RNA sequence: GGGAACGACUCGAGUAGAGUCGAAAAUCCAGUCCCUCCCCCGUCCGAGAGAAGGGAGACUCCGGAACUCCUGCCAUUUGAGGGACGAAGCCGCCACCGGGCGCUCCCCUCGGACCUCCUCUGGAGGCCAUGUGGUUAAGUUCGCUUAACCACAUGGAAAAGAAACAACAACAACAAC
Reactivity to 2A3 in 0.01 (KOAc 150mM, MgCl2 10mM, bicine 150mM(pH8.5), 24C), signal-to-noise 1, nucleotides 027 to 126: u010c000c000a000g140u040c000c010c000u000c000c010c000c000c000g000u000c010c000g030a020g000a010g010a070a190g010g000g010a010g000a010c000u000c030c010g050g000a050a050c040u040c010c020u020g030c040c030a200u130u120u190g040a080g000g010g000a010c030g030a050a020g060c060c060g050c060c020a060c030c000g060g020g000c040g020c030u000c010c000c000c000u000c000g000g010a010c000c000u000c020c010u170c120u210g000g000a010g000g060
Reactivity to DMS in 0.01 (KOAc 150mM, MgCl2 10mM, bicine 150mM(pH8.5), 24C), signal-to-noise 3, nucleotides 027 to 126: u010c010c030a150g000u010c030c010c020u000c010c020c000c010c020g030u000c010c020g010a060g020a150g000a190a220g010g000g000a020g010a100c040u000c000c010g000g010a190a180c080u000c030c040u000g010c120c070a120u010u000u000g010a100g000g000g000a070c070g000a040a060g010c090c070g010c070c110a140c050c030g010g020g010c150g000c010u000c010c000c000c010u000c020g000g000a090c000c020u010c010c010u000c170u010g010g010a010g020g020
Structure probing data (2A3 and DMS) for a 177-nucleotide construct.
For DMS, 2,267 sequencing reads were counted.
For DMS the reverse transcriptase was MarathonRT.
Reactivities are given for positions 27 through 126.
The RNA was probed in 150 mM KOAc, 10 mM MgCl2 and 150 mM bicine (pH 8.5) at 24 C.